Source information: An RNA of 207 nucleotides, treated with 2A3 and read out base by base. Conditions: 150 mM KOAc, 10 mM MgCl2 and 150 mM bicine (pH 8.5), 24 C. For 2A3 the reverse transcriptase was SuperScript II with manganese.
[RMDB]
RNA sequence: GGGAACGACUCGAGUAGAGUCGAAAAAAGUCACCCUCCUCGCAUCGCAAGUUCGUGCUUGCGACUUACACGUAGGGCGAGGGGUGGGCGAAAGUUACCAUGAGACCGUAACUUUCGUAGUCAUUGAAAAACUACAAAGCCUUCGGGCUUUGUAGAAGUGCGUUAUGUCCUUCGGGACAUAACGCACAAAAGAAACAACAACAACAAC
Reactivity to 2A3 in 0.01 (KOAc 150mM, MgCl2 10mM, bicine 150mM(pH8.5), 24C), signal-to-noise 2, nucleotides 027 to 156: a000a000g050u020c030a010c000c000c000u070c000c000u000c000g010c000a050u030c000g010c000a000a010g000u150u160c130g130u300g100c000u070u090g000c000g000a030c020u070u080a060c140a040c090g120u100a180g090g100g000c000g000a010g000g000g000g000u060g000g020g000c000g000a010a000a000g000u000u000a000c000c010a100u150g050a010g030a100c020c050g000u000a000a000c000u000u000u000c010g000u010a050g050u040c060a050u050u150g030a000a000a000a120a000c000u030a010c000a000a000a000g000c000c000u040u070c180g090g000g000c000u000u000u000g000u000a000g000a010a000